[RMDB]
RNA sequence: GGGAACGACUCGAGUAGAGUCGAAAAAAAAGAUAUGGACCUAGGAACUACGCUGAAGAUCGCGAAGAACAGGAAUCGGAAACGAUUCCUGGGAGCGAUUGAAGGCGCCUAGGUCCUAAGUCAAAAACAUUAUAGUUCAGUUCGCUGAACUAUAAUGAAAAGAAACAACAACAACAAC
Reactivity to 2A3 in 0.01 (KOAc 150mM, MgCl2 10mM, bicine 150mM(pH8.5), 24C), signal-to-noise 2, nucleotides 027 to 126: a020a000a010a030g040a010u060a030u050g000g000a000c000c010u010a010g000g000a110a050c150u210a040c300g010c050u100g010a070a000g010a040u010c010g010c000g300a300a040g000a040a000c010a010g000g000a000a030u000c010g000g000a000a030a000c000g010a010u000u000c010c010u000g020g000g000a000g020c020g010a010u040u140g010a020a020g040g000c000g000c000c010u000a000g020g010u000c000c000u000a000a000g000u000c000a000a030a000a130a050
Reactivity to DMS in 0.01 (KOAc 150mM, MgCl2 10mM, bicine 150mM(pH8.5), 24C), signal-to-noise 3, nucleotides 027 to 126: a050a030a070a080g000a030u000a220u010g000g000a020c000c000u000a020g000g010a140a060c090u020a300c020g000c000u000g010a170a280g020a010u000c000g020c000g000a090a150g000a100a180c020a020g000g000a010a000u000c000g000g000a040a030a080c010g000a020u000u000c000c000u000g000g000g000a030g040c000g010a000u000u000g000a210a240g000g010c010g000c010c030u010a000g000g000u000c000c000u000a000a050g000u020c010a060a060a070a110a150
Chemical mapping of a 177-nucleotide RNA with 2A3 and DMS. Reactivities are rounded to 0.1 and cut off at 0 and 3.